[RMDB]
RNA sequence: GGGAACGACUCGAGUAGAGUCGAAAAGGUAGACUGAACAUCAAUGGACCAACUCGCACUAAGUUGGAGCCUAGUGUGUUUCAUGAUGUGUUUAAAGGCAGUAAGGAACCAGCAGUCUUAACAAGUAACCCAUAUCAUAUUUCGAUAUGAUAUGGGUAAAAGAAACAACAACAACAAC
Reactivity to DMS in 0.01 (KOAc 150mM, MgCl2 10mM, bicine 150mM(pH8.5), 24C), signal-to-noise 9, nucleotides 027 to 126: g010g010u010a030g010a060c050u000g010a110a050c050a030u010c070a090a080u010g020g010a160c030c020a030a020c030u000c120g010c180a110c150u010a040a030g010u000u000g010g000a100g010c010c020u000a090g010u010g010u000g010u000u000u000c020a060u000g010a060u000g010u000g000u000u010u010a060a100a130g010g000c030a030g000u020a090a170g000g010a040a040c030c060a120g010c020a030g000u000c020u000u000a050a090c090a060a090g010u010a100
Reactivity to 2A3 in 0.01 (KOAc 150mM, MgCl2 10mM, bicine 150mM(pH8.5), 24C), signal-to-noise 9, nucleotides 027 to 126: g080g050u070a010g010a040c020u020g030a100a040c020a070u110c050a060a180u170g000g010a010c010c010a010a020c010u020c060g110c050a080c120u120a060a030g040u030u030g060g060a110g040c010c010u040a060g030u020g010u010g010u110u040u030c040a060u090g040a040u040g060u010g060u040u120u210a130a080a030g110g000c010a020g020u070a070a040g040g000a030a030c020c000a010g010c000a010g010u000c000u050u040a090a040c030a070a010g050u030a040

This 177-nucleotide RNA was probed chemically with DMS and 2A3. For 2A3, 27,901 sequencing reads were counted. It was measured as part of the RMDB library OK2TRN. For DMS, 32,715 sequencing reads were counted. The RNA was probed in 150 mM KOAc, 10 mM MgCl2 and 150 mM bicine (pH 8.5) at 24 C.